Record summary: Chemical mapping of a 177-nucleotide RNA with 2A3 and DMS. For 2A3 the reverse transcriptase was SuperScript II with manganese. The data come from the RNA Mapping Database (RMDB), library TTRDEL. Conditions: 150 mM KOAc, 10 mM MgCl2 and 150 mM bicine (pH 8.5), 24 C.
RNA sequence: GGGAACGACUCGAGUAGAGUCGAAAAGAUAUGGAGCAACGGGAGUUAUAGGUGUCGGAAACGAUUUCGACCUAUUAACGAAGAACGUUGCUCCUAAGUCAAAGUGAGUAACUUCGGUUACUCACAAGUGAUUGAUAUCCUUCGGGAUAUCAAUCACAAAAGAAACAACAACAACAAC
Reactivity to 2A3 in 0.01 (KOAc 150mM, MgCl2 10mM, bicine 150mM(pH8.5), 24C), signal-to-noise 2, nucleotides 027 to 126: g050a000u050a040u090g000g010a000g000c000a010a030c010g020g010g010a040g030u040u000a000u000a030g030g030u160g170u250c030g010g090a010a110a100c200g120a170u000u100u080c030g040a020c000c000u010a030u130u180a040a000c020g090a150a140g020a040a000c000g000u000u000g020c010u010c000c000u020a010a000g010u020c030a090a000a000g000u000g000a000g020u010a000a000c010u080u160c280g120g000u000u020a000c030u020c000a010c000a000a020
Reactivity to DMS in 0.01 (KOAc 150mM, MgCl2 10mM, bicine 150mM(pH8.5), 24C), signal-to-noise 2, nucleotides 027 to 126: g000a050u010a300u000g010g030a030g020c010a010a010c000g000g030g000a060g000u000u000a030u000a030g010g010u020g000u050c000g010g030a010a050a180c280g000a180u000u010u000c040g010a060c000c020u000a070u010u010a010a000c000g020a100a110g010a130a150c010g000u000u000g000c000u000c000c000u010a000a050g000u000c040a080a070a110g000u000g000a000g000u000a010a000c000u000u000c210g040g000u000u000a000c000u000c000a000c000a010a090